About this RNA
Source: RMDB library RNAMAK, as collected in RNAgym. Structure probing data (2A3) for a 207-nucleotide construct.

[RMDB]
RNA sequence: GGGAACGACUCGAGUAGAGUCGAAAAGAUAUGGAGCGUGGAGUACGAGCUUGGAUUUAUGGGAGUCACCCUAUCGGAAACGAUAGACAAGUCUCCCAUUGUCAGCUUGAAACACGCUCCUAAGUCAAAGCGAAAUCACCUUCGGGUGAUUUCGCAAGAUGAUCCUGGAGUUCGCUCCAGGAUCAUCAAAAGAAACAACAACAACAAC
Reactivity to 2A3 in 0.01 (KOAc 150mM, MgCl2 10mM, bicine 150mM(pH8.5), 24C), signal-to-noise 2, nucleotides 027 to 156: g040a030u100a030u170g000g000a000g000c000g010u010g010g000a020g010u040a100c170g010a010g010c070u170u180g160g000a080u300u300u190a010u050g020g000g000a000g020u030c030a050c000c020c000u010a000u000c000g000g040a060a040a050c010g000a000u000a000g010a040c020a110a140g000u000c000u010c000c010c000a000u010u000g000u000c000a010g010c020u020u030g000a000a000a000c000a010c000g010c000u000c000c000u000a000a000g020u010c050a060a010a090g000c000g000a000a000a010u000c010a000c010c000u050u120c300g050g010g000u000g000a000u000u000u000c010g020c010a000a010
The reactions ran in a buffer of 150 mM KOAc, 10 mM MgCl2 and 150 mM bicine (pH 8.5), at 24 C.